Background
The data come from the RNA Mapping Database (RMDB), library TTRINS. Structure probing data (DMS) for a 177-nucleotide construct. Values cover nucleotides 27 to 126. For DMS the reverse transcriptase was MarathonRT. Conditions: 150 mM KOAc, 10 mM MgCl2 and 150 mM bicine (pH 8.5), 24 C.

RNA sequence: GGGAACGACUCGAGUAGAGUCGAAAAGAUAUGGAUAGCAUCGGGAUCGCGCAUAGACAUGCUUGAGGGAUCGGAAACGAUCCGUAGAGCAACAGCUAUGCGCGAUCCCGAGUGCUAUCCUAAGUCAGACAUAACCACGGUUCGCCGUGGUUAUGUCAAAAGAAACAACAACAACAAC
Reactivity to DMS in 0.01 (KOAc 150mM, MgCl2 10mM, bicine 150mM(pH8.5), 24C), signal-to-noise 1, nucleotides 027 to 126: g020a050u010a300u010g000g000a000u000a000g000c000a110u000c010g000g040g010a000u000c000g040c000g010c000a010u000a010g010a050c140a300u000g000c010u000u000g000a270g010g000g000a010u000c010g010g010a160a070a300c020g010a000u000c000c000g040u000a260g000a060g000c040a010a050c300a110g000c000u000a000u000g000c010g010c000g000a000u010c000c020c000g000a000g030u000g040c010u000a000u000c000c000u000a050a120g040u000c050a150